[RMDB]
RNA sequence: GGGAACGACUCGAGUAGAGUCGAAAAUUUUCGCCUGAUUGCCUUAUGGGUACAGCCAAGAUAGCCUUAUUUGUCCCUCAGGUGAGGACCUCGCCAAUUGUGAACCCAUUGGCUGUCCAUCCAUAAGAGCCAAGGAUUAAUUCGUUAAUCCUUGGCUAAAAGAAACAACAACAACAAC
Reactivity to DMS in 0.01 (KOAc 150mM, MgCl2 10mM, bicine 150mM(pH8.5), 24C), signal-to-noise 5, nucleotides 027 to 126: u010u010u010u000c040g000c020c020u000g000a240u000u010g010c220c000u000u000a020u010g000g010g010u000a040c030a020g010c020c020a020a030g000a140u000a120g000c040c100u000u000a130u010u000u000g000u000c010c020c060u010c060a030g020g020u000g000a060g010g000a050c040c220u000c160g020c000c070a070a110u000u000g020u010g010a060a160c040c020c030a170u000u000g000g000c010u000g010u010c150c170a030u000c000c000a020u000a020a020g000
Reactivity to 2A3 in 0.01 (KOAc 150mM, MgCl2 10mM, bicine 150mM(pH8.5), 24C), signal-to-noise 3, nucleotides 027 to 126: u060u020u020u060c020g030c000c010u090g060a140u090u290g060c010c010u010u010a010u020g020g000g000u030a030c010a000g000c020c010a020a020g020a190u120a050g060c000c050u190u120a230u170u190u150g010u020c030c010c000u010c010a010g000g010u020g000a040g000g010a010c020c040u040c070g050c050c040a100a100u160u120g080u120g100a070a070c000c000c010a060u010u010g000g000c000u000g000u000c040c050a010u000c010c000a010u020a030a020g030